RNA sequence: GGGAACGACUCGAGUAGAGUCGAAAACAAGCGCGGCAGGUGCUCGGUAGGUGAAAAGCUGGGUCGCAAGCUAUAUGCGCACAUGCGAUGCGCGUCUCCGGUGCGGACAGAAUGUGGCAACCUGGCCUGUACGCAGCCGCUUCGGUGGUUGUGUACAAAAAGAAACAACAACAACAAC
Reactivity to 2A3 in 0.01 (KOAc 150mM, MgCl2 10mM, bicine 150mM(pH8.5), 24C), signal-to-noise 1, nucleotides 027 to 126: c120a020a040g200c070g000c050g170g050c030a020g070g050u040g030c060u050c090g000g080u240a250g050g200u270g060a160a150a050a030g050c010u040g000g000g120u070c020g000c020a020a010g030c060u030a040u050a010u180g040c020g000c010a010c000a070u260g070c100g070a130u020g010c000g000c010g030u010c040u070c020c020g050g040u070g000c000g040g020a010c020a010g160a210a150u300g030u090g070g020c020a080a110c090c070u030g190g020c060c020
The data come from the RNA Mapping Database (RMDB), library OK1LIB. This 177-nucleotide RNA was probed chemically with 2A3. For 2A3, 582 sequencing reads were counted. The reactions ran in a buffer of 150 mM KOAc, 10 mM MgCl2 and 150 mM bicine (pH 8.5), at 24 C.